[RMDB]
RNA sequence: GGGAACGACUCGAGUAGAGUCGAAAAAGCAGGUUAACAAGCAUUAAUACUAAAUGUGUUUCAUCGUCUACUUAUUGCUAAACAAAUUGAUUGUUCAUCAAAUUUGCAAUUCGUUAGUUGGGUUAAAGAGUCUCUCAACUUUCGAGUUGAGAGACUCAAAAGAAACAACAACAACAAC
Reactivity to 2A3 in 0.01 (KOAc 150mM, MgCl2 10mM, bicine 150mM(pH8.5), 24C), signal-to-noise 1, nucleotides 027 to 126: a000g110c130a040g010g010u210u130a050a000c000a100a110g160c050a070u000u160a090a130u120a160c010u300a220a090a090u250g070u000g000u030u000u030c060a130u150c080g110u000c000u000a040c060u000u000a000u000u000g000c110u080a040a040a040c000a070a000a210u000u000g000a000u000u180g000u300u060c000a000u100c000a010a090a000u000u000u000g000c000a040a060u010u010c160g000u000u000a070g000u080u040g070g130g000u000u100a030a030a030
Conditions: 150 mM KOAc, 10 mM MgCl2 and 150 mM bicine (pH 8.5), 24 C.
An RNA of 177 nucleotides, treated with 2A3 and read out base by base.